Background:
Conditions: 150 mM KOAc, 10 mM MgCl2 and 150 mM bicine (pH 8.5), 24 C. This 207-nucleotide RNA was probed chemically with 2A3 and DMS. The 2A3 profile rests on 1,077 reads. High 2A3 reactivity points to a flexible backbone, as in loops and unpaired stretches. Source: RMDB library M2RFPK, as collected in RNAgym.
RNA sequence: GGGAACGACUCGAGUAGAGUCGAAAAGCUUCCUCUUGGCGCGGAGGUUUAACUGCGCUCGCUCCCCAUAUCGGUGUGGGCGCACCGGAUUUACAAACUAAAGUCCUUUAGGGAGCGGAAAGGGACAAAAACUUGCACGUGUUCGCACGUGCAAGAAUCUGUAGAAUCUGUUCGCAGAUUCUACAGAAAAAGAAACAACAACAACAAC
Reactivity to 2A3 in 0.01 (KOAc 150mM, MgCl2 10mM, bicine 150mM(pH8.5), 24C), signal-to-noise 2, nucleotides 027 to 156: g030c000u040u080c010c000u000c000u000u010g020g010c000g030c000g030g010a010g010g000u070u130u060a020a020c030u050g000c000g000c010u000c000g000c000u040c000c030c000c020a070u090a060u180c010g000g000u000g000u050g040g080g020c050g000c040a000c010c030g020g000a010u110u140u200a120c110a060a060a000c010u190a080a070a020g000u030c000c000u010u030u040a000g000g000g000a010g000c020g010g000a060a010a010g030g010g040a030c090a030a130a030a010a030c010u000u000g000c000a000c010g000u000g000u040u030c130g010c100a000c020g010u010g000c000a000a000g000a010a010
Reactivity to DMS in 0.01 (KOAc 150mM, MgCl2 10mM, bicine 150mM(pH8.5), 24C), signal-to-noise 1, nucleotides 027 to 156: g050c040u010u010c010c000u030c030u000u010g010g000c000g070c010g030g010a190g020g010u000u010u000a070a180c010u010g010c000g020c000u020c050g050c020u040c030c000c020c040a180u000a080u010c050g020g000u000g000u000g040g040g000c130g060c010a010c040c030g000g030a180u010u000u010a300c070a140a100a170c170u010a030a080a070g000u010c010c010u000u010u010a070g040g000g020a030g030c010g000g000a030a040a080g000g010g010a070c090a140a160a070a170a100c010u000u000g000c000a040c010g000u010g030u000u010c300g030c000a000c000g010u010g000c020a000a010g010a030a060